[RMDB]
RNA sequence: GGGAACGACUCGAGUAGAGUCGAAAAGUUCUAGGGUGCUGGUCAUUUCCGACAAUGGACCCGAGACGUACCUGUCGGUGCUGGCGUGUGCAAAGCUCGGGGCGAUCGCCGUCAUGGCCGACGGCAAUCUCACACUGGCGUUCGCGCCAGUGUGAGAAAAAGAAACAACAACAACAAC
Reactivity to 2A3 in 0.01 (KOAc 150mM, MgCl2 10mM, bicine 150mM(pH8.5), 24C), signal-to-noise 2, nucleotides 027 to 126: g040u100u030c020u040a020g010g030g000u110g120c010u070g020g000u010c000a060u010u160u090c030c030g020a020c010a080a160u200g000g010a000c000c000c000g000a010g020a020c010g000u000a070c000c000u000g030u030c000g050g110u170g220c120u070g000g010c020g010u210g000u000g070c060a000a230a020g000c000u010c070g030g000g050g020c020g110a130u160c110g010c000c000g020u000c000a050u090g040g000c010c010g000a000c000g000g010c000a010a110
Reactivity to DMS in 0.01 (KOAc 150mM, MgCl2 10mM, bicine 150mM(pH8.5), 24C), signal-to-noise 1, nucleotides 027 to 126: g000u030u010c010u000a070g010g070g020u000g030c070u000g040g010u000c050a180u010u070u060c300c110g000a000c110a140a100u050g000g000a040c000c000c000g050a050g000a010c100g000u010a140c030c030u000g020u040c000g000g000u020g010c020u020g010g000c000g010u060g020u010g070c130a080a200a090g000c050u000c090g070g020g000g020c110g010a210u000c000g000c000c010g000u000c000a030u050g040g000c090c050g080a010c010g000g010c060a060a020
The data come from the RNA Mapping Database (RMDB), library OK1LIB.
Chemical mapping of a 177-nucleotide RNA with 2A3 and DMS.
The DMS profile rests on 1,251 reads.
Values cover nucleotides 27 to 126.
2A3 adducts were read by reverse transcription with SuperScript II with manganese.
For DMS the reverse transcriptase was MarathonRT.
For 2A3, 889 sequencing reads were counted.
The RNA was probed in 150 mM KOAc, 10 mM MgCl2 and 150 mM bicine (pH 8.5) at 24 C.